[RMDB]
RNA sequence: GGGAACGACUCGAGUAGAGUCGAAAACUAGCUUCCGCUUAUACGCGCGCUCACGGAUGCAGAUGCUCGAACAACAGCGCGCGGGCAUGCAGUCGCAGCGCCAAUACACGGGGCAGUCGUGACUAGACGAUGCGGCUGGAUUCGUCUGGCUGUAUCGAAAAGAAACAACAACAACAAC
Reactivity to 2A3 in 0.01 (KOAc 150mM, MgCl2 10mM, bicine 150mM(pH8.5), 24C), signal-to-noise 9, nucleotides 027 to 126: c010u020a050g020c000u250u080c030c010g030c060u090u080a070u030a100c050g020c000g000c000g000c020u020c020a070c040g080g030a100u100g000c020a030g060a300u230g040c020u030c040g070a140a040c040a040a030c020a100g050c020g000c010g000c000g040g000g000c010a010u030g000c000a060g070u120c050g000c030a020g010c010g000c020c010a040a040u080a050c060a010c040g010g000g010g000c010a000g030u040c040g040u020g020a030c020u020a030g010a060
Reactivity to DMS in 0.01 (KOAc 150mM, MgCl2 10mM, bicine 150mM(pH8.5), 24C), signal-to-noise 9, nucleotides 027 to 126: c040u000a100g020c020u000u000c010c020g010c080u000u000a090u000a210c100g010c070g020c010g010c010u000c140a110c160g000g000a060u000g010c020a110g010a130u010g010c020u000c030g000a080a090c100a090a240c210a050g010c050g020c120g020c010g010g000g020c030a070u000g000c020a070g010u000c070g010c230a040g000c060g020c010c020a070a060u000a070c130a070c050g000g000g000g010c060a050g010u000c040g010u000g000a180c040u000a050g000a260

Structure probing data (2A3 and DMS) for a 177-nucleotide construct. For DMS the reverse transcriptase was MarathonRT. For 2A3, 111,775 sequencing reads were counted. For DMS, 90,489 sequencing reads were counted. Source: RMDB library OK2TRN, as collected in RNAgym. High 2A3 reactivity points to a flexible backbone, as in loops and unpaired stretches. The RNA was probed in 150 mM KOAc, 10 mM MgCl2 and 150 mM bicine (pH 8.5) at 24 C.